[RMDB]
RNA sequence: GGGAACGACUCGAGUAGAGUCGAAAAGCAUUCCACUUCGGUGGAAUGCAAAUGCCGGCUGCAAGAAAAGUGCUUCAAAGAGUGGGAGCUCUGCCGAAGAAAAAAGUUCCAUGUUCGCAUGGAACAACCUAGUGUAUUCCUUCGGGAAUACACUAGGAAAAGAAACAACAACAACAAC
Reactivity to DMS in 0.01 (KOAc 150mM, MgCl2 10mM, bicine 150mM(pH8.5), 24C), signal-to-noise 2, nucleotides 027 to 126: g000c000a020u010u000c010c000a030c000u000u010c150g020g020u000g010g000a010a020u000g010c020a020a050a020u000g020c050c030g000g010c010u010g000c060a070a160g000a070a030a060a100g000u020g000c020u010u000c040a030a130a090g020a080g030u010g020g010g000a120g000c010u000c000u000g010c080c090g010a060a130g010a000a030a050a070a060a050g000u000u000c010c000a020u010g000u000u010c130g000c000a010u010g010g000a000a000c000a060a050
Reactivity to 2A3 in 0.01 (KOAc 150mM, MgCl2 10mM, bicine 150mM(pH8.5), 24C), signal-to-noise 2, nucleotides 027 to 126: g020c000a020u020u030c000c000a000c000u010u070c180g070g000u010g000g000a000a000u000g020c000a000a020a070u120g030c000c000g030g000c050u040g000c060a090a020g050a110a170a030a020g040u050g040c000u020u030c040a120a150a100g130a100g040u160g020g030g000a020g000c000u000c010u030g010c030c020g000a090a110g010a070a110a020a000a010a000g010u000u000c000c000a010u000g050u000u090c250g000c060a000u000g000g000a000a000c000a000a000